RNA sequence: GGGAACGACUCGAGUAGAGUCGAAAAAGACUCCGAAGCUGGUGAAGGGUCGCAAGCCACUCUGACGUCUGCCGGUCUCUUAAAGAACGGCCGCGAGAGUGGGGGACCUGGCAGCACGUGUCUCGGAGCCGUGGAGUACUUUCGAGUACUCCACGGCAAAAGAAACAACAACAACAAC
Reactivity to DMS in 0.01 (KOAc 150mM, MgCl2 10mM, bicine 150mM(pH8.5), 24C), signal-to-noise 2, nucleotides 027 to 126: a030g000a220c040u000c000c010g000a080a090g000c020u010g000g010u010g000a170a060g000g010g020u000c000g000c090a090a150g020c000c000a020c010u000c000u000g010a150c040g000u020c070u020g010c010c010g010g000u000c020u000c160u030u080a080a100a040g000a020a020c010g000g000c000c190g000c000g000a050g000a000g000u000g000g000g000g010g010a000c000c000u000g000g000c020a020g020c020a050c140g000u010g000u000c060u020c010g010g000a270
Reactivity to 2A3 in 0.01 (KOAc 150mM, MgCl2 10mM, bicine 150mM(pH8.5), 24C), signal-to-noise 2, nucleotides 027 to 126: a000g000a050c000u000c020c070g020a090a040g000c040u110g040g130u210g220a050a050g020g000g010u000c000g000c240a160a040g060c000c000a030c000u000c000u060g140a100c050g160u100c030u020g000c000c000g020g020u020c010u050c000u020u250a190a170a000g020a070a000c000g000g000c000c000g000c000g010a000g000a000g000u000g000g000g000g000g000a000c000c060u110g080g020c000a000g000c020a060c080g140u130g040u010c000u030c110g030g000a040
Overview:
Structure probing data (DMS and 2A3) for a 177-nucleotide construct. The DMS profile rests on 3,238 reads. The reactions ran in a buffer of 150 mM KOAc, 10 mM MgCl2 and 150 mM bicine (pH 8.5), at 24 C. The data come from the RNA Mapping Database (RMDB), library OK1LIB.